[RMDB]
RNA sequence: GGGAACGACUCGAGUAGAGUCGAAAACAACAAGAGGGACAAGAAUCUGACCUGCACCUCCUCGUGGUGUCCCUCGGAGACGUGCUCAACGCGCGGCCGACGCAGGCAGAAAAGACGAAGACGUCAACAUUUUAUAGUGAUUCGUCACUAUAAAAUGAAAAGAAACAACAACAACAAC
Reactivity to 2A3 in 0.01 (KOAc 150mM, MgCl2 10mM, bicine 150mM(pH8.5), 24C), signal-to-noise 1, nucleotides 027 to 126: c110a010a020c050a120a040g010a010g000g040g020a000c040a040a040g090a100a150u140c010u070g050a240c010c000u040g000c000a000c000c030u050c030c000u080c060g040u210g010g000u050g020u020c000c020c000u000c000g000g000a010g010a050c010g000u030g040c020u040c130a110a140c040g010c010g000c000g010g070c030c030g010a030c000g000c020a000g030g000c030a000g010a020a020a010a000g020a020c060g060a150a060g050a010c030g010u020c000a000a050